[RMDB]
Source information:
This 177-nucleotide RNA was probed chemically with 2A3 and DMS. For 2A3 the reverse transcriptase was SuperScript II with manganese. Conditions: 150 mM KOAc, 10 mM MgCl2 and 150 mM bicine (pH 8.5), 24 C.

RNA sequence: GGGAACGACUCGAGUAGAGUCGAAAACAGGAGCAAGUGUGUGGAAUCUGGACGGAUGGCUCUUAAGGACGUGCCUGUGAAUGGAUGGAGCUGCGAGGUGGAGCCUGGCAUGCACUGUUCACUUGGGGGUAAGCCACUUUUUCGAAAGUGGCUUACCAAAAGAAACAACAACAACAAC
Reactivity to 2A3 in 0.01 (KOAc 150mM, MgCl2 10mM, bicine 150mM(pH8.5), 24C), signal-to-noise 2, nucleotides 027 to 126: c020a010g030g080a040g000c000a180a000g060u080g020u000g000u010g090g020a070a080u030c030u060g000g080a030c010g010g090a070u220g050g040c000u000c010u060u020a070a070g060g010a020c070g050u060g050c040c020u100g000u100g030a070a060u100g000g030a010u070g000g060a030g000c000u040g020c030g090a020g010g050u180g060g060a050g020c010c000u010g050g000c000a020u080g030c000a000c030u040g020u060u030c010a030c120u180u080g150g000g050
Reactivity to DMS in 0.01 (KOAc 150mM, MgCl2 10mM, bicine 150mM(pH8.5), 24C), signal-to-noise 1, nucleotides 027 to 126: c090a170g000g000a100g000c050a020a040g010u010g000u000g010u060g010g020a080a130u000c070u010g000g020a080c080g000g040a080u000g010g010c000u020c020u000u030a090a100g010g020a110c070g000u000g010c010c000u000g000u060g040a030a100u040g000g000a020u020g010g000a000g040c080u000g000c020g000a010g000g000u040g000g000a230g020c030c000u000g040g000c010a050u020g060c030a040c070u000g040u000u030c060a050c060u020u030g000g010g000
Reactivities are given for positions 27 through 126.